[RMDB]
RNA sequence: GGGAACGACUCGAGUAGAGUCGAAAAAGAAAGCAAGGCGAAGGGAAGCCACCACCGCGGGAGCUGUACGUUGUACGAGAGCUCUGCUUUUACCUUCCCAAACCGCGGAAAGGGAAAACCCAAAAAAUCAAUACAAUAACUUCGGUUAUUGUAUUGAAAAAGAAACAACAACAACAAC
Reactivity to 2A3 in 0.01 (KOAc 150mM, MgCl2 10mM, bicine 150mM(pH8.5), 24C), signal-to-noise 2, nucleotides 027 to 126: a010g020a000a000a000g010c030a040a060g030g010c040g100a090a110g030g010g020a050a000g020c020c000a020c000c020a020c000c000g030c010g000g040g010a000g020c010u020g020u090a030c040g130u100u270g090u210a020c010g020a030g020a000g260c000u010c000u010g000c000u020u000u010u000a030c010c010u010u010c000c000c000a020a030a020c000c000g000c000g000g080a040a020a040g000g000g000a030a030a020a080c000c000c000a060a060a000a010a000a050
Reactivity to DMS in 0.01 (KOAc 150mM, MgCl2 10mM, bicine 150mM(pH8.5), 24C), signal-to-noise 4, nucleotides 027 to 126: a120g010a050a030a020g010c010a200a090g010g010c020g010a190a090g030g000g000a240a070g010c020c010a090c030c020a070c010c010g010c010g020g000g010a020g010c020u010g010u000a030c040g010u000u000g010u010a080c030g020a130g020a050g000c000u000c000u000g010c000u000u000u000u000a100c140c100u000u000c000c000c000a030a080a090c030c010g010c020g010g010a020a040a050g010g000g000a110a040a080a200c010c000c040a010a030a060a060a060a130